RNA sequence: GGGAACGACUCGAGUAGAGUCGAAAAGAUAUGGAAGACGAGUGCUUUUGACGAAUGAAUCGGAAACGAUACCAUUCGAUAAGCACCGUCUUCCUAAGUCAAACGAUCAAACUUCGGUUUGAUCGAACUCCCACAAUGUCUUCGGACAUUGUGGGAGAAAAGAAACAACAACAACAAC
Reactivity to DMS in 0.01 (KOAc 150mM, MgCl2 10mM, bicine 150mM(pH8.5), 24C), signal-to-noise 2, nucleotides 027 to 126: g000a030u000a300u000g000g000a010a000g000a000c000g000a180g020u020g000c010u010u030u020u000g040a250c080g000a020a030u000g000a090a020u000c010g030g000a090a050a150c000g030a000u000a060c140c000a010u000u000c000g010a130u000a000a000g000c000a010c000c000g000u000c000u010u000c000c000u000a000a030g000u000c000a090a090a300c000g000a060u000c000a000a010a020c000u000u000c210g020g020u000u000u000g000a000u000c000g000a070a060
Reactivity to 2A3 in 0.01 (KOAc 150mM, MgCl2 10mM, bicine 150mM(pH8.5), 24C), signal-to-noise 1, nucleotides 027 to 126: g010a000u070a050u240g010g000a020a020g010a000c040g040a130g270u000g000c000u120u220u300u200g230a060c010g000a020a000u010g020a000a020u000c010g000g000a110a010a000c020g000a010u060a110c160c020a020u000u010c000g040a060u040a100a030g030c010a000c000c010g000u010c000u010u030c010c000u000a000a000g000u020c030a000a030a100c020g010a000u000c010a010a000a010c000u060u060c210g160g010u000u000u030g010a010u010c000g000a000a010
The record gives the reactivity of an RNA of 177 nucleotides to DMS and 2A3. The 2A3 profile rests on 2,689 reads. The RNA was probed in 150 mM KOAc, 10 mM MgCl2 and 150 mM bicine (pH 8.5) at 24 C. 2A3 adducts were read by reverse transcription with SuperScript II with manganese. Source: RMDB library TTRDEL, as collected in RNAgym.